[RMDB]
RNA sequence: GGGAACGACUCGAGUAGAGUCGAAAACGGUAUUGGUCAAGGCUAUACCGACAGCGCACCUUCAAACGGGCGCUUAAUCCCCGGCCAAGCGCCGAAAUAUGAAUAGACACCGCUGGGCUGGUAGGGCAAAACAUGGCGAUCUUCGGAUCGCCAUGAAGAUAUUUGAAUACUUCGGUAUUCAAAUAUCAAAAGAAACAACAACAACAAC
Reactivity to DMS in 0.01 (KOAc 150mM, MgCl2 10mM, bicine 150mM(pH8.5), 24C), signal-to-noise 1, nucleotides 027 to 156: c030g020g000u010a030u000u000g050g030u000c010a150a190g010g030c040u000a120u000a040c030c020g000a150c070a070g030c040g000c030a000c030c010u000u020c110a040a150a210c170g000g000g030c030g030c000u000u000a030a090u010c000c000c020c010g000g020c030c020a070a080g060c010g030c040c050g020a040a050a080u010a190u000g000a210a240u000a140g010a230c050a080c080c010g010c020u010g000g010g030c000u000g030g030u000a050g000g000g020c080a090a050a010a260c000a010u000g010g020c020g030a020u000c010u000u010c270g010g000a060u010c000g050c010c000a010u000g000a030a170
Reactivity to 2A3 in 0.01 (KOAc 150mM, MgCl2 10mM, bicine 150mM(pH8.5), 24C), signal-to-noise 2, nucleotides 027 to 156: c010g000g000u010a030u060u290g050g040u080c020a150a080g120g040c010u000a000u010a000c010c000g030a060c050a010g030c010g000c050a300c070c020u070u140c130a070a100a080c050g010g000g000c000g000c010u000u020a010a010u020c000c000c000c040g000g000c000c000a110a000g050c040g000c070c020g100a060a080a000u260a080u110g120a080a050u040a120g040a000c020a020c060c020g000c020u030g030g010g000c000u020g030g030u060a040g020g040g000c040a050a020a030a020c010a020u010g000g000c000g000a000u010c000u020u080c160g060g010a000u000c000g010c000c000a000u000g010a000a000
Conditions: 150 mM KOAc, 10 mM MgCl2 and 150 mM bicine (pH 8.5), 24 C. Structure probing data (DMS and 2A3) for a 207-nucleotide construct. For DMS the reverse transcriptase was MarathonRT. For 2A3, 1,032 sequencing reads were counted. For DMS, 1,838 sequencing reads were counted. The data come from the RNA Mapping Database (RMDB), library M2RFOK.